[RMDB]
RNA sequence: GGGAACGACUCGAGUAGAGUCGAAAAGAUAUGGACGCAAUCUGCUACCCACCCAUGUGUUCGGAAACGAACAUGAAUGGAGGCAGAGUUGCGUCCUAAGUCAAACUUUCCGGUUCGCCGGAAAGAACGAUUGAGGUAUGUUCGCAUACCUCAAUCGAAAAGAAACAACAACAACAAC
Reactivity to DMS in 0.01 (KOAc 150mM, MgCl2 10mM, bicine 150mM(pH8.5), 24C), signal-to-noise 3, nucleotides 027 to 126: g000a030u000a300u010g010g000a010c020g040c010a030a080u000c000u010g020c020u000a170c140c050c070a300c130c010c010a020u000g000u000g010u000u000c000g000g000a080a090a290c010g000a010a010c010a000u000g030a090a020u000g000g010a290g010g000c000a030g000a050g000u010u000g010c010g050u000c000c000u010a010a060g010u000c000a100a160a210c000u000u000u000c000c000g000g000u000u010c260g030c000c000g000g000a000a010a000g010a070a140
Reactivity to 2A3 in 0.01 (KOAc 150mM, MgCl2 10mM, bicine 150mM(pH8.5), 24C), signal-to-noise 3, nucleotides 027 to 126: g030a020u080a020u220g000g010a000c010g000c000a020a020u010c000u010g020c000u120a230c050c050c050a100c040c010c010a050u130g000u030g000u020u000c020g020g000a070a060a070c020g000a000a030c000a000u050g250a120a100u050g000g020a060g100g020c020a020g050a030g280u030u020g000c000g000u010c000c000u010a010a010g000u010c020a010a030a090c020u010u000u000c010c000g040g040u090u090c300g090c040c000g000g000a000a000a000g000a020a030